The data come from the RNA Mapping Database (RMDB), library M2RFPK. This 207-nucleotide RNA was probed chemically with 2A3. Values are in units of 0.01, from 0 to 300, in steps of 10. Conditions: 150 mM KOAc, 10 mM MgCl2 and 150 mM bicine (pH 8.5), 24 C. 2A3 adducts were read by reverse transcription with SuperScript II with manganese.
[RMDB]
RNA sequence: GGGAACGACUCGAGUAGAGUCGAAAAGUGGAGGCGAAAGUCACCCGCCUCGCAUCGCAAGUUCGUGCUUGCGACUUACACGUAGGGCGAGGGGUGGGCGAAAGUUGCCAUGAGACCGUAACUUUCGAUGAGGCGGGACUGUUCGCAGUCCCGCCAAGAUUGAUGAGGGAUUCGUCCCUCAUCAAUCAAAAGAAACAACAACAACAAC
Reactivity to 2A3 in 0.01 (KOAc 150mM, MgCl2 10mM, bicine 150mM(pH8.5), 24C), signal-to-noise 2, nucleotides 027 to 156: g060u030g050g040a020g020g000c060g070a130a070a020g240u180c060a130c030c000c010g030c000c000u000c000g010c030a030u010c000g030c010a030a010g010u170u250c110g180u300g130c010u000u010g000c020g000a010c000u040u110a030c080a010c060g050u090a120g000g000g070c000g050a090g040g000g000g000u210g000g010g000c010g000a030a000a000g020u020u000g020c050c030a050u100g020a020g000a170c020c020g020u000a000a020c000u000u030u030c000g060a060u070g060a030g010g030c020g000g000g000a000c010u020g090u080u190c210g000c170a000g000u000c000c000c000g000c000c000a000a000